This 177-nucleotide RNA was probed chemically with DMS and 2A3. 2A3 adducts were read by reverse transcription with SuperScript II with manganese. Values cover nucleotides 27 to 126. Conditions: 150 mM KOAc, 10 mM MgCl2 and 150 mM bicine (pH 8.5), 24 C. The DMS profile rests on 2,115 reads.
RNA sequence: GGGAACGACUCGAGUAGAGUCGAAAAGAUAUGGACAGACAUCAGCAACAGCUCGGAAACGAGACAUGCUGUAUGUACUGUCCUAAGUCAAAACACUACUUGUGCAGUUCGCUGCACAAGUAGUGAAGAAUCAACCGUUGUUCGCAACGGUUGAUUCAAAAGAAACAACAACAACAAC
Reactivity to DMS in 0.01 (KOAc 150mM, MgCl2 10mM, bicine 150mM(pH8.5), 24C), signal-to-noise 2, nucleotides 027 to 126: g010a050u010a300u010g000g010a020c000a020g000a050c000a000u000c000a000g010c010a020a100c260a130g010c000u000c000g000g000a070a110a210c010g010a010g000a020c090a130u000g000c010u000g000u010a000u000g000u000a100c000u000g000u000c000c000u010a020a080g000u010c060a080a090a070a190c010a030c000u020a000c000u010u000g000u000g010c000a000g010u000u000c210g010c000u000g000c000a000c000a000a010g010u000a000g010u000g010a050a070
Reactivity to 2A3 in 0.01 (KOAc 150mM, MgCl2 10mM, bicine 150mM(pH8.5), 24C), signal-to-noise 2, nucleotides 027 to 126: g020a020u060a040u160g000g000a000c000a010g010a000c010a020u000c000a010g000c020a010a100c020a220g020c010u020c010g000g040a090a070a070c020g000a000g070a030c020a010u070g000c010u010g130u180a000u000g000u030a230c000u000g000u010c000c000u000a000a000g010u010c020a030a000a060a060c030a000c020u040a000c000u010u020g010u010g000c020a000g000u060u130c270g060c180u000g000c000a000c000a010a000g000u000a000g000u000g000a010a010